[RMDB]
RNA sequence: GGGAACGACUCGAGUAGAGUCGAAAAGCGCCGUGCACAAGGGGAUCUGCAAAGCACGGCACGUAAGCACUCAGAUGCGAAAGUAGGAACUGCGUUAGGCGUCCAGACGCAGGUAGCCCGAAUUUUACACUCUGUAGGAUUUCGAUCCUACAGAGUGAAAAGAAACAACAACAACAAC
Reactivity to 2A3 in 0.01 (KOAc 150mM, MgCl2 10mM, bicine 150mM(pH8.5), 24C), signal-to-noise 7, nucleotides 027 to 126: g110c060g010c010c010g000u010g010c010a070c040a170a090g050g060g020g060a140u100c040u130g050c080a070a070a020g000c000a000c000g010g000c000a000c000g010u030a040a040g010c010a020c040u170c100a060g070a270u050g010c020g060a100a030a020g060u090a030g060g050a040a030c020u010g000c000g010u010u050a070g030g050c020g030u010c000c020a020g000a010c010g000c000a000g020g020u030a030g020c000c000c000g010a010a010u030u010u010u070a060
Reactivity to DMS in 0.01 (KOAc 150mM, MgCl2 10mM, bicine 150mM(pH8.5), 24C), signal-to-noise 5, nucleotides 027 to 126: g010c080g020c020c000g020u000g010c000a100c200a150a150g010g010g010g010a090u020c020u000g010c110a080a170a120g010c000a010c020g010g010c000a000c030g020u000a070a110g020c040a040c040u010c120a090g010a090u000g000c030g000a080a070a100g000u020a100g000g000a110a140c030u000g000c010g000u000u000a110g000g010c040g010u010c020c050a120g010a020c010g010c010a010g000g010u020a090g010c010c010c010g040a080a160u000u010u010u000a160
Overview: This 177-nucleotide RNA was probed chemically with 2A3 and DMS. The reactions ran in a buffer of 150 mM KOAc, 10 mM MgCl2 and 150 mM bicine (pH 8.5), at 24 C. DMS adducts were read by reverse transcription with MarathonRT. 2A3 adducts were read by reverse transcription with SuperScript II with manganese. It was measured as part of the RMDB libraries RFM100 and RFMREP.